[RMDB]
RNA sequence: GGGAACGACUCGAGUAGAGUCGAAAAGGCGUAGGAGAGAGGGCCGCGGUGCUCUGGAGUAGAGGCUUCUAGCUUUCAAAACACCAUCAAUCGUCCCUUCUUCUUCCCUUUCAACGGGUUCUUCGGUUGAAACCCAACCGGGGGCUCCCCCUCUCGGCUUUACUCUAAUGUUCGCAUUAGAGUAAAGAAAAGAAACAACAACAACAAC
Reactivity to 2A3 in 0.01 (KOAc 150mM, MgCl2 10mM, bicine 150mM(pH8.5), 24C), signal-to-noise 1, nucleotides 027 to 156: g030g020c110g050u000a000g010g030a010g000a050g030a010g010g020g000c000c020g040c070g010g000u000g010c000u000c000u030g010g010a020g000u030a000g000a050g030g000c050u190u210c080u300a060g020c030u230u300u130c030a030a000a050a030c020a000c010c150a040u050c030a000a210u160c000g030u000c000c000c000u020u000c000u010u000c000u000u010c000c000c000u000u040u040c030a020a020c020g020g000g000u230u260c000u090u060c020g000g020u030u020g040a140a040a050c020c020c000a000a000c000c000g030g010g000g000g000c010u020c010c000c000c000c000u020c000u050c040g140g000